[RMDB]
RNA sequence: GGGAACGACUCGAGUAGAGUCGAAAACAAUGGGACGCUGGGCUUUGUGGCAGUGACAUGACCGGAUACUGAAGCGCGCACGGUAUGGUCAACAGCACUGCGUAACAUCAAAGCCUGUGCUGAAGCGCGCACGGCAACCGAAAGGUGCGAGAAGUAAGAGCAAUAUGUUCUUCGGAACAUAUUGCUCAAAAGAAACAACAACAACAAC
Reactivity to 2A3 in 0.01 (KOAc 150mM, MgCl2 10mM, bicine 150mM(pH8.5), 24C), signal-to-noise 1, nucleotides 027 to 156: c050a060a200u100g010g090g060a030c060g020c050u020g000g010g000c010u000u020u010g010u050g000g010c000a000g000u000g070a160c050a160u060g020a000c000c000g110g140a010u000a080c040u010g040a170a040g020c000g010c000g010c000a000c020g000g000u030a000u010g020g050u040c030a070a050c030a190g220c000a000c000u000g000c000g050u070a090a040c030a150u120c030a010a000a000g050c010c000u020g060u080g000c000u060g090a000a040g000c000g000c000g000c030a000c010g010g030c100a220a260c050c000g000a120a070a000g000g000u020g050c000g010a060g060a050a050g200u300a180a140
Chemical mapping of a 207-nucleotide RNA with 2A3. For 2A3 the reverse transcriptase was SuperScript II with manganese. The reactions ran in a buffer of 150 mM KOAc, 10 mM MgCl2 and 150 mM bicine (pH 8.5), at 24 C.